[RMDB]
RNA sequence: GGGAACGACUCGAGUAGAGUCGAAAAAACCAGACAAUGGUCCAGCUGUUCAACAACCUUAACAAGACCCGCGCUGAAGGAGCGAUCCUAGCAGGACUUGACGCGCAUGAGUACGACUCCACUACUCCCUCACUACUUCUUUCGAGAAGUAGUGAGGAAAAGAAACAACAACAACAAC
Reactivity to DMS in 0.01 (KOAc 150mM, MgCl2 10mM, bicine 150mM(pH8.5), 24C), signal-to-noise 3, nucleotides 027 to 126: a050a080c060c010a060g020a110c080a120a040u000g010g000u000c040c040a080g020c020u000g000u000u010c080a020a120c100a080a070c020c050u000u010a080a100c080a060a050g000a100c030c030c020g000c130g000c060u000g000a070a070g000g000a020g010c110g010a140u000c020c020u000a070g000c040a110g000g020a080c030u000u010g000a080c130g000c070g020c050a040u000g000a060g000u020a070c050g020a060c000u010c010c060a090c040u000a100c080u000c060
Reactivity to 2A3 in 0.01 (KOAc 150mM, MgCl2 10mM, bicine 150mM(pH8.5), 24C), signal-to-noise 2, nucleotides 027 to 126: a000a000c050c010a040g020a050c120a090a100u130g080g000u020c010c010a000g030c020u090g040u140u100c030a070a080c010a040a070c080c030u090u100a050a080c030a070a060g040a160c000c000c000g060c050g000c110u090g040a110a020g020g040a010g030c040g040a020u000c000c010u010a040g000c050a040g010g050a020c010u020u060g020a020c040g000c000g020c070a050u120g030a000g050u040a030c000g000a050c040u030c030c020a040c000u080a060c020u050c000

An RNA of 177 nucleotides, treated with DMS and 2A3 and read out base by base. For 2A3, 2,325 sequencing reads were counted. 2A3 is a SHAPE reagent: it acylates the 2'-hydroxyl of flexible nucleotides of all four kinds. The reactions ran in a buffer of 150 mM KOAc, 10 mM MgCl2 and 150 mM bicine (pH 8.5), at 24 C. 2A3 adducts were read by reverse transcription with SuperScript II with manganese.